This 177-nucleotide RNA was probed chemically with DMS and 2A3. For DMS, 1,482 sequencing reads were counted. DMS adducts were read by reverse transcription with MarathonRT.
[RMDB]
RNA sequence: GGGAACGACUCGAGUAGAGUCGAAAAGAUAUGGAUCUCUCUCCAAGCACGAAGAACUAAACUCGGAAACGAGUUUAGGGAGUGUGGAGAGGAGAUCCUAAGUCAAAUCUCUCCUUCGGGAGAGAAACACAGCUAACUACUUCGGUAGUUAGCUGUGAAAAGAAACAACAACAACAAC
Reactivity to DMS in 0.01 (KOAc 150mM, MgCl2 10mM, bicine 150mM(pH8.5), 24C), signal-to-noise 2, nucleotides 027 to 126: g010a000u000a300u040g000g020a000u000c000u010c000u010c020u020c000c030a240a230g020c050a000c060g030a080a120g010a110a290c000u000a000a000a000c000u010c000g030g000a080a070a090c010g030a030g010u000u020u000a020g000g000g010a040g040u000g040u000g000g000a060g010a050g010g000a020g000a000u010c010c000u000a000a060g010u010c040a110a100a150u020c010u000c000u000c000c000u000u000c260g050g010g000a010g030a000g000a020a110a170
Reactivity to 2A3 in 0.01 (KOAc 150mM, MgCl2 10mM, bicine 150mM(pH8.5), 24C), signal-to-noise 1, nucleotides 027 to 126: g010a020u050a020u120g000g000a000u010c000u010c000u000c010u000c020c040a100a160g210c020a030c080g300a300a050g000a040a000c010u010a000a010a000c000u000c020g000g000a040a040a010c000g030a000g000u000u000u000a010g030g000g000a010g000u120g000u250g000g030a020g070a130g040g010a010g000a000u050c000c000u000a050a000g000u010c000a110a030a300u000c000u000c000u020c000c000u040u100c300g060g000g010a000g010a010g000a010a050a000